[RMDB]
RNA sequence: GGGAACGACUCGAGUAGAGUCGAAAAGUGUAAUACGUACAUUGGUUCUUCCUGGAGAGGUGGGACAACUUGAAGCAGGGUUGCUUCCAGGUCUUAGGUAGAUAAGAGACAAUCAAUAGCAUUCUUCUGAGUCUCUGAUGAGGCUUUUACUGAAUAACAGUAUUAGUCCUUUCGAGGACUAAUACUGAAAAGAAACAACAACAACAAC
Reactivity to 2A3 in 0.01 (KOAc 150mM, MgCl2 10mM, bicine 150mM(pH8.5), 24C), signal-to-noise 6, nucleotides 027 to 156: g040u030g030u080a090a100u090a140c050g020u010a000c010a040u050u150g010g000u010u010c010u030u010c010c010u010g020g000a030g010a020g010g040u050g010g000g010a010c010a080a040c060u020u050g020a030a000g010c020a020g070g180g090u150u070g020c010u010u000c010c010a010g000g030u000c010u040u090a050g010g040u040a030g040a090u090a100a050g020a010g010a020c030a020a040u070c010a010a040u020a050g040c010a030u060u010c020u120u030c060u070g010a010g020u010c010u000c020u060g080a150u270g020a010g000g000c000u020u080u120u110a080c060u080g050a050a030u120a120a020
Reactivity to DMS in 0.01 (KOAc 150mM, MgCl2 10mM, bicine 150mM(pH8.5), 24C), signal-to-noise 3, nucleotides 027 to 156: g040u000g020u010a090a150u010a100c080g000u000a050c020a040u010u010g030g010u000u000c020u000u010c030c020u010g000g010a070g030a100g010g020u010g010g010g000a080c020a030a060c040u000u000g010a110a170g030c070a190g000g040g010u000u000g010c020u000u010c020c050a040g000g020u000c030u010u000a070g030g040u000a030g020a180u000a070a090g000a090g010a050c010a040a070u010c070a040a070u000a080g010c040a180u010u010c030u000u000c040u010g000a080g010u000c010u010c020u030g020a130u000g000a060g000g030c010u000u000u010u020a120c070u020g010a130a180u020a060a180
Chemical mapping of a 207-nucleotide RNA with 2A3 and DMS. It was measured as part of the RMDB library OK3TST. DMS adducts were read by reverse transcription with MarathonRT. The 2A3 profile rests on 7,039 reads. For 2A3 the reverse transcriptase was SuperScript II with manganese. Conditions: 150 mM KOAc, 10 mM MgCl2 and 150 mM bicine (pH 8.5), 24 C.